[RMDB]
Chemical mapping of a 177-nucleotide RNA with 2A3 and DMS. The RNA was probed in 150 mM KOAc, 10 mM MgCl2 and 150 mM bicine (pH 8.5) at 24 C. For DMS the reverse transcriptase was MarathonRT. 2A3 adducts were read by reverse transcription with SuperScript II with manganese. The DMS profile rests on 2,676 reads.
RNA sequence: GGGAACGACUCGAGUAGAGUCGAAAAGACUACGGGUUCGCCCGUAGUCACUUACCGAGAAUGCGACUCGGUAUAUAACGCAUACCCUUGGAAACAAGGGAAUCACCAGUUCCUUCGGGAACUGGAAUGUCCUUAGAUGAUUCGUCAUCUAAGGACAAAAAGAAACAACAACAACAAC
Reactivity to 2A3 in 0.01 (KOAc 150mM, MgCl2 10mM, bicine 150mM(pH8.5), 24C), signal-to-noise 3, nucleotides 027 to 126: g000a000c000u000a010c000g000g060g010u040u070c230g070c020c020c010g000u000a000g000u000c010a010c000u020u060a030c000c000g000a010g020a070a030u040g020c030g150a170c070u010c000g000g030u010a000u000a000u010a010a000c000g030c000a010u080a170c020c010c000u010u020g020g010a040a050a030c010a000a000g010g000g050a010a040u050c030a020c020c000a000g000u000u010c000c000u020u090c230g050g000g000a000a000c000u010g010g000a010a090
Reactivity to DMS in 0.01 (KOAc 150mM, MgCl2 10mM, bicine 150mM(pH8.5), 24C), signal-to-noise 3, nucleotides 027 to 126: g020a010c010u000a020c000g000g020g040u000u020c260g040c010c000c000g000u000a000g010u010c040a030c070u000u000a300c000c000g000a000g000a140a010u000g000c070g000a150c000u000c000g000g000u000a030u010a010u010a000a040c050g000c030a030u000a260c010c000c000u000u000g000g000a190a070a180c000a000a010g000g020g010a050a050u010c180a140c020c000a000g010u000u000c000c000u000u020c150g030g010g010a010a010c010u000g000g010a030a050